[RMDB]
The record gives the reactivity of an RNA of 177 nucleotides to DMS and 2A3. For DMS the reverse transcriptase was MarathonRT. For 2A3, 16,576 sequencing reads were counted.

RNA sequence: GGGAACGACUCGAGUAGAGUCGAAAAGCCUUACGAUUCGUCGUAAGGCAUACAAAGUUUUGGCACUAUGAGCCCGCAGCGUUGGUGCUCCGACGCGGUGCAAUACGACGGAUUUCGAUCCGUCGAACGCUGUAAAAACAUUCGUGUUUUUACAGCGAAAAGAAACAACAACAACAAC
Reactivity to DMS in 0.01 (KOAc 150mM, MgCl2 10mM, bicine 150mM(pH8.5), 24C), signal-to-noise 5, nucleotides 027 to 126: g010c000c000u000u000a000c000g010a030u000u020c200g030u000c000g010u000a000a000g010g010c000a010u010a020c150a080a100a110g010u000u000u000u000g010g010c020a060c090u000a120u010g010a130g000c000c010c020g030c110a150g020c020g010u000u000g010g000u000g030c290u000c020c010g010a000c000g000c020g010g010u000g010c080a080a050u010a160c010g010a010c000g010g010a030u000u000u010c120g000a030u000c010c000g000u000c000g010a030a060
Reactivity to 2A3 in 0.01 (KOAc 150mM, MgCl2 10mM, bicine 150mM(pH8.5), 24C), signal-to-noise 6, nucleotides 027 to 126: g010c000c000u000u010a000c000g010a010u020u070c200g030u010c000g000u140a000a010g000g000c000a000u030a010c020a010a110a020g020u030u070u140u190g090g010c020a010c040u100a090u260g080a040g040c010c000c010g000c030a050g000c010g010u030u020g040g030u250g130c140u050c040c000g010a010c000g000c020g020g000u020g000c000a020a060u160a110c020g000a000c000g010g000a010u070u050u090c150g070a020u000c000c010g000u000c000g000a020a000